[RMDB]
This 170-nucleotide RNA was probed chemically with 2A3 and DMS.
RNA sequence: GGGAACGACUCGAGUAGAGUCGAAAAUCUUUCUCAACAUUCCGACGAUGUUUCCCAGCCAGGGGUUUUCAUCCUCAAGUUUCUUGAUCUUCUUGUUGAUUCGCCGGAGCUCCUUCUCGGCUAUUCGUGAACACACUGUUCGCAGUGUGUAAAAGAAACAACAACAACAAC
Reactivity to 2A3 in 0.01 (KOAc 150mM, MgCl2 10mM, bicine 150mM(pH8.5), 24C), signal-to-noise 9, nucleotides 027 to 129: u040c020u010u110u020c050u020c020a030a080c050a130u110u070c050c020g050a060c050g020a060u070g020u010u030u050c010c000c010a010g040c040c020a040g030g030g020g000u050u060u090u110c050a070u060c000c020u040c030a070a040g020u000u040u010c010u020u050g070a090u050c010u070u000c010u050u110g100u080u090g050a080u100u050c030g010c010c000g040g020a030g000c020u060c020c000u120u040c080u040c010g000g000c010u050a070u020u070c050g050u030g130a080
Reactivity to DMS in 0.01 (KOAc 150mM, MgCl2 10mM, bicine 150mM(pH8.5), 24C), signal-to-noise 9, nucleotides 027 to 129: u010c100u020u020u010c010u000c000a130a100c110a140u060u010c060c000g010a220c120g030a100u020g000u000u000u000c050c030c030a080g000c060c060a100g050g020g040g040u020u010u010u010c040a060u020c010c000u020c120a130a090g010u000u000u000c020u000u000g000a090u010c040u000u040c010u020u020g030u000u000g020a120u000u000c120g000c040c030g030g030a090g000c040u020c020c020u020u020c030u000c020g010g020c050u040a060u000u000c060g020u010g030a110
Source: RMDB library 15KLIB, as collected in RNAgym. The 2A3 profile rests on 20,311 reads.